[RMDB]
RNA sequence: GGGAACGACUCGAGUAGAGUCGAAAAAGAGUUAAAGAGUACCUGAAACUGCUGAAAGGGAACCGAAUCGUUUCCAGUGUCUAUAAUCCGUGGUAUAUUUCAUUGGCGAGUGUGUGCGUGCGUGUGCGACAAAAUUGUACUUCGGUACAAUUUUGUCAAAAGAAACAACAACAACAAC
Reactivity to DMS in 0.01 (KOAc 150mM, MgCl2 10mM, bicine 150mM(pH8.5), 24C), signal-to-noise 1, nucleotides 027 to 126: a070g030a130g020u010u020a050a090a050g010a110g020u000a070c060c030u010g000a180a070a090c020u010g010c020u000g000a040a100a140g010g000g010a080a090c070c030g010a060a040u000c040g000u000u000u010c030c000a120g020u000g030u010c060u010a060u000a090a070u010c070c050g030u010g000g000u000a030u000a050u010u010u000c070a080u000u000g000g000c040g010a080g020u000g030u010g010u020g020c030g040u010g030c050g020u010g000u020g010c140